[RMDB]
RNA sequence: GGGAACGACUCGAGUAGAGUCGAAAAGAUAUGGACCUCCCAUCCUCCAACAGCAUGAAUCGGAAACGAUUCAUGACAUGGAGGUGGUGAGGUCCUAAGUCAAAGAUGGACCGUUCGCGGUCCAUCAUCUGCUGUCAUAGUUCGCUAUGACAGCAGAAAAAGAAACAACAACAACAAC
Reactivity to DMS in 0.01 (KOAc 150mM, MgCl2 10mM, bicine 150mM(pH8.5), 24C), signal-to-noise 2, nucleotides 027 to 126: g020a040u000a300u010g000g000a030c000c000u000c020c020c010a010u000c020c000u010c000c010a050a110c300a190g000c000a000u000g010a010a000u000c010g000g000a120a080a250c010g000a030u000u010c000a000u000g000a040c120a290u000g000g030a010g010g050u010g000g000u000g040a020g010g010u000c000c000u000a010a080g000u000c070a050a090a100g020a000u010g000g000a030c000c000g030u010u040c220g020c040g060g000u000c000c000a000u000c000a050
Reactivity to 2A3 in 0.01 (KOAc 150mM, MgCl2 10mM, bicine 150mM(pH8.5), 24C), signal-to-noise 1, nucleotides 027 to 126: g030a030u070a070u170g000g010a010c010c010u000c000c000c040a100u200c000c030u000c030c000a140a140c100a260g070c020a000u000g000a010a010u000c000g020g020a070a010a050c010g010a000u020u020c000a000u000g000a010c010a020u080g040g020a060g010g000u010g030g060u300g000a000g000g010u030c000c000u000a000a000g010u010c040a000a000a090g000a000u000g000g000a000c000c000g040u030u080c300g010c000g170g000u000c010c010a000u000c000a010